[RMDB]
RNA sequence: GGGAACGACUCGAGUAGAGUCGAAAAGGAAUGUGCUUCGGCACAUUCCAAAAGAAAGGCAGACGGCGAACGCCAAACGCUGACGAACCAUAAUCGAAGGUAAAACCCACCGGUUCGCCGGUGGGAACCUUAUCAUCUGCUUCGGCAGAUGAUAAGGAAAAGAAACAACAACAACAAC
Reactivity to 2A3 in 0.01 (KOAc 150mM, MgCl2 10mM, bicine 150mM(pH8.5), 24C), signal-to-noise 2, nucleotides 027 to 126: g000g000a000a000u010g000u010g000c010u040u050c160g050g010c000a000c010a000u000u010c000c010a010a000a000a000g010a030a050a000g050g040c010a030g000a060c030g030g050c020g090a300a110c120g000c000c010a000a070a000c020g000c000u020g040a020c030g020a020a050c000c010a040u140a090a070u150c140g040a130a020g080g010u150a050a060a110a170c000c000c000a000c010c010g000g010u030u060c270g000c050c030g000g000u020g000g000g000a000a000
Reactivity to DMS in 0.01 (KOAc 150mM, MgCl2 10mM, bicine 150mM(pH8.5), 24C), signal-to-noise 2, nucleotides 027 to 126: g050g000a010a000u000g000u000g010c010u000u000c170g060g020c000a010c000a000u000u000c000c000a010a040a080a150g000a020a090a150g000g000c010a040g000a300c270g010g020c010g010a090a070c150g030c050c020a020a180a170c140g000c000u000g000a180c060g000a090a080c030c010a120u020a070a100u000c120g020a060a060g000g010u010a080a010a100a110c000c000c000a010c020c020g000g000u000u000c240g010c000c000g010g000u010g010g000g000a020a000
Overview:
Chemical mapping of a 177-nucleotide RNA with 2A3 and DMS. DMS adducts were read by reverse transcription with MarathonRT. The reactions ran in a buffer of 150 mM KOAc, 10 mM MgCl2 and 150 mM bicine (pH 8.5), at 24 C.